[RMDB]
RNA sequence: GGGAACGACUCGAGUAGAGUCGAAAAUAACUUCUAACAUGCCGUAAGAGAACAUCGACAUCGACAUAUCGACCAUGGUGAUUGGGGUAGAAGGAAUGGCGACGAUCAGCGGGUUGGUGCCGAUGCGGUUGCAUAAGCCUUUCGAGGCUUAUGCAACAAAAGAAACAACAACAACAAC
Reactivity to DMS in 0.01 (KOAc 150mM, MgCl2 10mM, bicine 150mM(pH8.5), 24C), signal-to-noise 2, nucleotides 027 to 126: u010a070a120c120u010u000c020u010a140a120c120a050u010g000c060c020g020u030a090a130g000a070g000a120a130c130a040u000c000g000a130c070a020u000c000g000a010c000a090u000a110u000c050g000a050c040c010a080u020g000g020u000g010a100u000u000g000g000g010g010u000a060g020a060a050g010g020a070a100u010g010g010c010g010a070c050g020a070u000c070a070g000c050g030g010g000u000u000g010g010u000g010c020c010g000a030u010g010c050g000
Reactivity to 2A3 in 0.01 (KOAc 150mM, MgCl2 10mM, bicine 150mM(pH8.5), 24C), signal-to-noise 2, nucleotides 027 to 126: u030a000a010c040u080u050c030u050a030a090c060a100u110g020c000c030g100u070a080a030g050a010g030a150a030c020a040u060c020g140a050c020a030u000c010g000a010c000a050u150a060u070c050g160a190c000c010a100u140g050g050u130g120a070u020u110g040g020g040g010u060a050g050a250a050g130g060a060a080u080g080g000c020g030a040c050g040a080u040c000a000g100c040g020g070g040u040u010g030g000u010g000c010c030g000a000u000g040c030g000